The record gives the reactivity of an RNA of 207 nucleotides to 2A3.
[RMDB]
RNA sequence: GGGAACGACUCGAGUAGAGUCGAAAAUUGCUCAGGCAGCGUAACGCUGCUUGAAAGACCACAUGAAAGUCCUGGCGGGUUAAGCGCCGCCAGGCGGGGUUAGGAGGCGCCUGGCAACAGAAGCCUCAUUACAUGGAAGACUUCGGUCUUCCAUGAACGCAUGUAUAUUGUUCGCAAUAUACAUGCGAAAAGAAACAACAACAACAAC
Reactivity to 2A3 in 0.01 (KOAc 150mM, MgCl2 10mM, bicine 150mM(pH8.5), 24C), signal-to-noise 2, nucleotides 027 to 156: u080u100g020c010u010c010a000g030g000c000a000g010c010g030u100a160a060c190g000c000u010g020c020u000u000g000a000a000a000g040a020c000c060a050c050a170u240g080a120a020a050g300u000c000c010u000g000g000c020g000g030g000u040u120a120a100g090c090g050c050c010g000c000c000a000g000g000c000g000g010g000g000u000u200a060g070g050a010g000g000c040g000c020c000u050g280g000c000a000a000c000a030g000a000a000g000c000c000u000c010a000u000u020a010c000a000u000g000g000a000a000g000a000c000u010u100c300g080g000u000c010u000u000c000c000a000u000g000a010a000